[RMDB]
RNA sequence: GGGAACGACUCGAGUAGAGUCGAAAAGAUGUGCGUGCCGAUGACACCGGAUCGAUGUCGGUGGUUCUGCCAUGACGGGUUCUGUUGACCGGCCCGACCAGAAUCGCGGUGAGCGAUCAAUGAAGUCGUUCGGCCUGACAUUCGUGUCAGGCCGAACAAAAGAAACAACAACAACAAC
Reactivity to 2A3 in 0.01 (KOAc 150mM, MgCl2 10mM, bicine 150mM(pH8.5), 24C), signal-to-noise 2, nucleotides 027 to 126: g080a000u030g220u090g150c000g080u100g020c110c110g000a120u100g000a000c000a030c070c050g000g010a060u080c050g000a100u260g000u030c000g120g000u020g000g040u000u120c000u130g170c000c100a150u170g110a060c000g000g010g000u160u130c030u300g150u140u090g100a190c080c000g000g000c000c000c000g000a000c000c000a000g000a030a040u000c000g000c020g300g000u300g150a000g030c000g030a000u000c030a000a110u220g110a260a000g130u130c000